Chemical mapping of a 177-nucleotide RNA with DMS and 2A3.
[RMDB]
RNA sequence: GGGAACGACUCGAGUAGAGUCGAAAAACCGGUGAGUACACCGGAAUUGCCGGGAAGACUGGGUCCUUUCUUGGAUAAACCCACUCUAUGCCCGGCAAUUUGGGCAUGCCCCCGCAAGAAUGCUAGCUAACACAUGAAUGUUCGCAUUCAUGUGUUAAAAAGAAACAACAACAACAAC
Reactivity to DMS in 0.01 (KOAc 150mM, MgCl2 10mM, bicine 150mM(pH8.5), 24C), signal-to-noise 6, nucleotides 027 to 126: a120c000c000g000g010u000g010a180g010u020a080c030a020c010c000g010g000a030a000u000u000g000c000c000g000g000g010a110a020g010a010c080u000g000g000g010u000c010c020u000u050u050c180u020u020g000g000a110u020a070a210a040c000c000c000a010c150u000c000u000a150u030g010c000c000c000g000g000c000a010a000u000u010u000g010g000g020c050a090u010g000c060c010c000c040c050g020c150a090a090g010a120a060u020g000c020u000a100g000c250
Reactivity to 2A3 in 0.01 (KOAc 150mM, MgCl2 10mM, bicine 150mM(pH8.5), 24C), signal-to-noise 9, nucleotides 027 to 126: a000c010c000g010g000u040g010a160g110u100a040c010a000c010c000g000g000a000a000u000u000g000c000c000g000g000g000a020a000g000a000c020u000g000g010g030u060c000c010u120u260u190c150u150u210g030g000a030u090a110a130a030c000c000c000a010c010u010c000u040a090u300g120c000c000c000g000g000c000a000a000u000u000u000g000g000g000c020a010u110g020c020c000c000c000c030g030c030a050a050g080a160a040u130g030c020u070a060g030c020
Conditions: 150 mM KOAc, 10 mM MgCl2 and 150 mM bicine (pH 8.5), 24 C. The data come from the RNA Mapping Database (RMDB), libraries RFM100 and RFMREP.